[RMDB]
RNA sequence: GGGAACGACUCGAGUAGAGUCGAAAAACGCGGAGUACGCUCCGCGACAACACUUCUUUCGACCCGCUAACCGAGACCUAUGGGUCGUUAAAUUACGUCUCUAUCUUACUGACAUAACAUCGCACAAAAAACGUGGUUCGGUUCGCCGAACCACGAAGGUUGAAUGAGCGUUCGCGCUCAUUCAACCAAAAGAAACAACAACAACAAC
Reactivity to 2A3 in 0.01 (KOAc 150mM, MgCl2 10mM, bicine 150mM(pH8.5), 24C), signal-to-noise 1, nucleotides 027 to 156: a030c010g010c010g000g000a010g010u030a000c170g020c070u000c000c000g140c000g020a000c000a160a030c010a010c030u190u240c060u110u130u120c000g010a020c000c000c000g060c290u170a030a000c030c050g000a000g010a060c020c030u030a100u130g000g000g000u000c000g040u010u000a040a020a000u100u120a010c040g010u000c030u010c000u040a150u060c010u010u090a060c080u150g050a020c000a050u110a120a060c070a060u200c090g060c130a070c150a130a090a040a040a000a030c070g000u030g000g000u000u000c000g000g000u000u040c170g030c000c000g000a030a000c020c010a010c010g000a010a000

Structure probing data (2A3) for a 207-nucleotide construct. Source: RMDB library M2RFPK, as collected in RNAgym. The reactions ran in a buffer of 150 mM KOAc, 10 mM MgCl2 and 150 mM bicine (pH 8.5), at 24 C.